The record gives the reactivity of an RNA of 207 nucleotides to 2A3 and DMS.
DMS adducts were read by reverse transcription with MarathonRT.
For 2A3 the reverse transcriptase was SuperScript II with manganese.
Reactivities are given for positions 27 through 156.
The reactions ran in a buffer of 150 mM KOAc, 10 mM MgCl2 and 150 mM bicine (pH 8.5), at 24 C.
The 2A3 profile rests on 6,362 reads.
The DMS profile rests on 6,586 reads.
[RMDB]
RNA sequence: GGGAACGACUCGAGUAGAGUCGAAAAUGCGAUUUCCAGUGUCCGCAGACGCACCACAGACCGUGGGAUGAGAGGAGCGAGGACCGCCAAGCUUCCUCAUUUUCCAUGUGUUCUUGCGCGCUUUUCGCCCGGGGCCCCGCCGCGGUCAUCGGCACAGAUCUAUAUCCUACUUCGGUAGGAUAUAGAUAAAAGAAACAACAACAACAAC
Reactivity to 2A3 in 0.01 (KOAc 150mM, MgCl2 10mM, bicine 150mM(pH8.5), 24C), signal-to-noise 5, nucleotides 027 to 156: u120g010c030g090a100u040u070u040c050c040a020g030u010g050u120c050c040g040c040a040g020a120c030g000c030a070c050c040a050c050a050g030a040c000c030g010u000g010g010g010a000u020g010a010g030a070g010g000a000g000c010g010a030g010g020a110c050c040g180c080c100a030a010g000c000u030u010c000c000u010c010a010u030u040u080u050c010c010a020u030g130u010g040u100u030c020u060u110g020c040g000c000g000c010u060u060u070u140c060g010c010c010c010g040g000g030g000c020c030c030c100g040c020c020g030c050g030g020u040c040a100u090c020g010g000c020a010c020a040g090
Reactivity to DMS in 0.01 (KOAc 150mM, MgCl2 10mM, bicine 150mM(pH8.5), 24C), signal-to-noise 3, nucleotides 027 to 156: u000g020c030g050a200u010u000u000c020c030a150g010u000g010u000c020c020g060c070a170g020a130c050g050c060a060c050c060a130c030a060g010a030c030c020g030u000g000g020g000a040u030g010a060g020a140g040g010a060g020c010g000a300g020g010a200c220c280g020c040c010a050a300g030c000u000u010c010c010u020c000a040u020u000u000u000c000c030a060u000g020u010g020u000u000c030u000u010g000c030g000c050g000c050u000u010u010u000c060g030c030c010c020g000g000g010g020c000c030c040c090g000c000c020g060c060g050g020u000c030a040u010c030g000g010c030a090c050a130g000